[RMDB]
RNA sequence: GGGAACGACUCGAGUAGAGUCGAAAAGAGCGCCUGAUGCCCGAAGGUCAAGGCCUUCGCGCCCGUGCGCAUCAUUUGGUCGGGGUAGCGGCCCCUCCCGAUGCAUACGGGGUCGCUCCAGGCGCCGGUUAAAGCGCCUGUUCGCAGGCGCUUUAACAAAAGAAACAACAACAACAAC
Reactivity to DMS in 0.01 (KOAc 150mM, MgCl2 10mM, bicine 150mM(pH8.5), 24C), signal-to-noise 1, nucleotides 027 to 126: g000a140g020c010g000c000c000u000g000a210u000g000c000c050c020g020a010a010g010g010u000c060a120a110g030g000c010c030u000u000c010g000c300g010c000c010c000g000u000g060c160g000c000a030u030c000a170u020u030u040g000g050u010c180g020g000g000g000u040a120g020c140g010g020c000c000c000c000u040c180c000c220g000a010u000g080c010a080u000a040c000g000g000g010g020u010c050g000c000u010c080c000a010g000g020c000g010c000c090g020
Reactivity to 2A3 in 0.01 (KOAc 150mM, MgCl2 10mM, bicine 150mM(pH8.5), 24C), signal-to-noise 2, nucleotides 027 to 126: g030a010g000c010g010c010c000u020g040a060u170g040c010c000c000g000a010a000g020g000u060c110a060a140g170g020c010c000u020u010c020g020c010g020c000c000c000g040u070g010c050g000c000a000u020c010a040u080u140u210g090g000u090c090g000g000g000g010u050a070g170c180g120g060c070c000c020c000u050c000c030c000g000a010u020g000c020a010u020a090c050g000g000g090g080u220c040g010c000u020c000c020a000g020g000c010g000c010c000g020